[RMDB]
RNA sequence: GGGAACGACUCGAGUAGAGUCGAAAAGGAAGACAACUCGCGGUCUUCCAAGUACUCGAAGGAAGGCGAAUGACACCACGUCAUCCAACGCGAGAAGGUGUCGACGCACGAGUGCAGCGUCAAAGAAGGGUACCUUGUACUUCGGUACGAGGUACCCAAAAGAAACAACAACAACAAC
Reactivity to DMS in 0.01 (KOAc 150mM, MgCl2 10mM, bicine 150mM(pH8.5), 24C), signal-to-noise 4, nucleotides 027 to 126: g010g010a010a020g020a040c020a060a060c040u010c070g000c000g010g000u010c000u000u000c000c010a030a040g030u000a040c010u030c030g020a190a140g020g000a090a090g010g000c000g000a080a110u040g030a050c000a000c000c040a230c070g030u020c060a050u050c120c120a110a090c050g000c010g000a050g010a090a090g010g010u010g000u000c020g020a210c010g000c000a080c000g010a110g030u020g000c080a140g010c120g010u000c040a100a070a150g030a120a170
Reactivity to 2A3 in 0.01 (KOAc 150mM, MgCl2 10mM, bicine 150mM(pH8.5), 24C), signal-to-noise 6, nucleotides 027 to 126: g000g000a000a010g010a010c010a070a050c040u000c010g000c020g000g000u000c000u010u000c000c000a000a000g020u020a030c010u020c060g080a150a090g120g100a080a080g060g000c000g040a030a050u110g000a020c010a000c010c010a040c050g050u050c050a110u090c020c050a090a030c040g010c010g000a020g010a030a060g020g000u020g000u010c040g000a020c010g020c020a040c080g080a030g120u130g020c070a030g000c020g080u100c050a080a100a110g140a070a110
The record gives the reactivity of an RNA of 177 nucleotides to DMS and 2A3. For 2A3, 6,709 sequencing reads were counted. The RNA was probed in 150 mM KOAc, 10 mM MgCl2 and 150 mM bicine (pH 8.5) at 24 C. For DMS, 5,924 sequencing reads were counted. 2A3 adducts were read by reverse transcription with SuperScript II with manganese.